An RNA of 177 nucleotides, treated with DMS and 2A3 and read out base by base. For 2A3 the reverse transcriptase was SuperScript II with manganese. Values are in units of 0.01, from 0 to 300, in steps of 10. The data come from the RNA Mapping Database (RMDB), library OK1LIB.
RNA sequence: GGGAACGACUCGAGUAGAGUCGAAAAGACGCGUGACGCCAGUAAUGAUGAAACUGUGGUGUCGUUACUGAAUGAGCAUGAGAAAUUGAUUAAACAAACGACACGGCUGGAAAGCAGUGUGAAGGCACUGAAAGUGGCCAUUCGUGGCCACUUUCAGAAAAGAAACAACAACAACAAC
Reactivity to DMS in 0.01 (KOAc 150mM, MgCl2 10mM, bicine 150mM(pH8.5), 24C), signal-to-noise 2, nucleotides 027 to 126: g010a020c060g000c100g040u020g010a080c110g000c050c000a050g000u000a010a030u000g000a150u010g000a090a070a040c090u000g020u030g000g010u000g010u000c010g030u000u010a080c070u010g000a090a150u000g010a110g040c000a070u000g000a150g000a030a120a150u070u000g000a080u060u000a040a040a100c150a020a000a000c040g000a050c020a010c000g010g000c000u020g050g090a040a140a120g060c010a090g020u020g000u020g000a050a140g030g000c160a080
Reactivity to 2A3 in 0.01 (KOAc 150mM, MgCl2 10mM, bicine 150mM(pH8.5), 24C), signal-to-noise 3, nucleotides 027 to 126: g020a040c020g010c010g080u080g030a060c060g000c060c030a000g030u090a020a150u080g130a040u100g120a070a160a030c160u080g040u080g130g260u060g010u010c020g020u000u040a060c000u000g120a070a100u130g020a080g090c030a020u110g030a040g220a080a090a090u230u140g050a040u100u150a030a110a060c090a100a070a010c020g010a020c020a000c000g100g020c000u000g060g130a120a090a040g000c040a010g000u000g110u080g070a090a050g030g020c070a000